[RMDB]
RNA sequence: GGGAACGACUCGAGUAGAGUCGAAAACUUUAGGGCAUUUGACAUCUGCAACUAUAAGGCUAAGGUUGCUGGUAUUGGAAAAUACUACAAGACUAAUACUUGUAGGUUUGUAGAAUUAGAUGACCAAGAGUAUUUUUACGUUCGCGUAAAAAUACUCAAAAGAAACAACAACAACAAC
Reactivity to 2A3 in 0.01 (KOAc 150mM, MgCl2 10mM, bicine 150mM(pH8.5), 24C), signal-to-noise 1, nucleotides 027 to 126: c010u130u070u160a100g040g000g000c020a040u050u030u020g050a040c030a150u010c010u020g000c000a020a000c010u020a010u020a050a020g080g040c050u060a070a060g050g020u020u010g030c100u060g010g000u000a000u000u040g040g020a080a050a030a030u020a010c000u020a040c030a100a020g030a050c010u050a040a060u030a190c000u000u020g000u010a000g010g070u010u060u030g000u020a000g000a000a000u030u020a020g010a030u010g020a040c000c000a050a010
Reactivity to DMS in 0.01 (KOAc 150mM, MgCl2 10mM, bicine 150mM(pH8.5), 24C), signal-to-noise 1, nucleotides 027 to 126: c040u020u010u020a110g010g000g000c010a000u000u000u030g000a040c110a110u000c010u000g000c000a050a000c020u000a010u000a010a000g010g000c190u000a170a190g010g000u020u020g010c240u000g000g000u000a010u000u030g010g050a130a230a010a010u000a030c000u000a070c040a020a150g010a100c030u000a130a110u010a080c020u000u010g000u000a000g000g000u000u000u000g030u000a030g020a050a300u000u000a020g000a030u000g010a060c020c010a090a170
The record gives the reactivity of an RNA of 177 nucleotides to 2A3 and DMS. The reactions ran in a buffer of 150 mM KOAc, 10 mM MgCl2 and 150 mM bicine (pH 8.5), at 24 C. Values cover nucleotides 27 to 126. The 2A3 profile rests on 1,259 reads.